This 177-nucleotide RNA was probed chemically with 2A3 and DMS. The RNA was probed in 150 mM KOAc, 10 mM MgCl2 and 150 mM bicine (pH 8.5) at 24 C. The data come from the RNA Mapping Database (RMDB), library OK2TST. For 2A3 the reverse transcriptase was SuperScript II with manganese.
RNA sequence: GGGAACGACUCGAGUAGAGUCGAAAAGCGCCUAUUACAGUUCACAAGUUGCAGGCCCAAACCUGAUUGGUGACUGGUGGUCUUACCAGGCAGGCGUCAUGCGCAACCGUGCAAUGUCCGUUGCCGCCCGGACAUGAGAGUUCGCUCUCAUGUCCGGAAAAGAAACAACAACAACAAC
Reactivity to 2A3 in 0.01 (KOAc 150mM, MgCl2 10mM, bicine 150mM(pH8.5), 24C), signal-to-noise 1, nucleotides 027 to 126: g090c110g050c000c020u130a150u160u240a140c010a050g010u070u100c040a040c030a170a000g060u160u160g130c050a040g060g070c090c110c130a020a100a090c020c010u050g040a100u060u120g030g040u020g010a010c010u010g040g050u030g090g000u000c050u120u070a070c030c090a000g020g050c000a010g030g000c020g050u010c030a040u090g010c010g030c020a120a130c090c050g050u060g000c020a040a300u080g030u090c060c000g120u110u100g000c000c000g080c020
Reactivity to DMS in 0.01 (KOAc 150mM, MgCl2 10mM, bicine 150mM(pH8.5), 24C), signal-to-noise 1, nucleotides 027 to 126: g020c150g010c010c000u000a090u010u010a170c110a030g000u000u000c000a050c040a050a100g000u000u000g000c020a040g010g040c040c080c170a030a090a300c000c010u000g050a080u000u000g010g030u000g030a030c030u000g000g000u000g010g000u000c090u000u010a080c070c090a070g000g010c070a070g000g010c020g000u000c060a050u000g010c060g000c010a090a010c100c140g000u000g010c030a080a110u010g000u000c060c040g000u010u000g010c010c030g000c110